This 177-nucleotide RNA was probed chemically with 2A3 and DMS.
As a SHAPE reagent, 2A3 marks flexible, mostly unpaired nucleotides at the ribose 2'-OH.
For DMS the reverse transcriptase was MarathonRT.
The data come from the RNA Mapping Database (RMDB), libraries RFM100 and RFMREP.
RNA sequence: GGGAACGACUCGAGUAGAGUCGAAAAGAAAGAAAGAAAGGAGCAGUUAUUUCGUUUUAGAAUCCAAACGCUUUGCCCAACUACUUGGCAACGGUAAAGCGUAGGAAUUCUAAAGCAAAAACACCAAUCUACCAGUUAUAUUCGUAUAACUGGUAGAAAAAGAAACAACAACAACAAC
Reactivity to 2A3 in 0.01 (KOAc 150mM, MgCl2 10mM, bicine 150mM(pH8.5), 24C), signal-to-noise 8, nucleotides 027 to 126: g070a010a020a000g080a030a070a010g070a040a090a030g070g020a060g030c100a050g060u060u060a180u120u090u080c050g000u000u020u000u000a000g000a000a000u000c010c000a200a120a010c000g000c000u000u000u000g000c010c020c010a060a070c050u210a050c040u140u180g150g000c100a110a050c070g000g000u010a000a000a000g000c000g000u000a010g000g010a030a080u000u000c000u000a000a000a000g000c000a040a000a000a020a000c040a020c030c000a010a050
Reactivity to DMS in 0.01 (KOAc 150mM, MgCl2 10mM, bicine 150mM(pH8.5), 24C), signal-to-noise 7, nucleotides 027 to 126: g000a060a070a080g000a080a050a100g000a050a080a060g000g000a080g000c090a060g010u010u010a080u010u010u010c120g020u010u000u000u000a010g000a020a010u000c000c000a050a100a050c010g020c000u000u010u000g000c010c000c090a170a180c100u020a090c170u030u020g020g030c100a100a110c300g000g020u000a010a010a000g010c000g020u000a050g000g000a030a030u000u000c000u000a000a000a010g020c010a020a030a050a030a030c110a110c120c090a070a110